This 177-nucleotide RNA was probed chemically with 2A3. Values are in units of 0.01, from 0 to 300, in steps of 10.
RNA sequence: GGGAACGACUCGAGUAGAGUCGAAAAGCUCGGAGACGAGCAAGGCUGACAAAACACUGUCCCAACCUCCACGUGGUGUCGGCUGGAUAAUGCUGCAUUAUGUUGCAUUUAUCAACUGGGAAUUAAAAUAGUCAGCGUGCUUCGGCACGCUGACUAUAAAAGAAACAACAACAACAAC
Reactivity to 2A3 in 0.01 (KOAc 150mM, MgCl2 10mM, bicine 150mM(pH8.5), 24C), signal-to-noise 1, nucleotides 027 to 126: g000c000u000c000g000g010a020g020a020c000g000a000g000c060a000a010g010g000c000u010g000a060c030a000a030a160a010c010a040c060u090g000u020c030c000c000a000a010c000c000u080c000c000a050c060g000u110g000g010u030g070u040c020g060g000c000u020g010g020a000u040a000a010u000g030c000u000g080c000a140u300u030a160u300g040u000u010g000c080a090u160u000u000a000u040c100a000a020c010u050g000g040g180a010a000u220u210a020a000a020